[RMDB]
RNA sequence: GGGAACGACUCGAGUAGAGUCGAAAACAGAUCACGUUCGCGUGAUCUGGAAAGAUUUCUCGUAGAGCCACGAGAAGUAAAUUAAAGAAAGCUCAGUGAGAACCACCCGCGGGUUCGCCCGCGGGAACUCUAAGGUAUCGUUCGCGAUACCUUAGAGAAAAGAAACAACAACAACAAC
Reactivity to DMS in 0.01 (KOAc 150mM, MgCl2 10mM, bicine 150mM(pH8.5), 24C), signal-to-noise 2, nucleotides 027 to 126: c000a000g000a000u000c000a000c000g010u000u000c190g010c000g030u000g030a000u000c000u040g000g000a080a110a190g000a130u000u000u000c010u010c000g010u000a060g030a030g000c010c130a010c000g000a010g000a000a000g000u000a060a000a030u000u010a010a050a070g020a040a010a180g000c000u000c010a190g000u000g000a150g010a140a110c150c240a150c010c010c000g050c000g000g000g000u000u010c230g020c000c000c000g010c000g020g000g000a000a020
Reactivity to 2A3 in 0.01 (KOAc 150mM, MgCl2 10mM, bicine 150mM(pH8.5), 24C), signal-to-noise 1, nucleotides 027 to 126: c000a000g010a000u000c000a000c010g020u040u060c170g010c000g060u010g010a010u030c010u020g000g030a020a070a000g080a070u000u010u030c000u000c010g010u020a030g010a000g000c080c210a020c010g010a000g000a020a000g030u090a000a030a040u100u050a000a020a060g140a050a030a010g020c010u010c040a020g060u060g160a160g000a150a030c010c010a040c000c010c000g010c020g000g110g000u030u080c140g110c040c010c000g000c000g010g010g000a000a000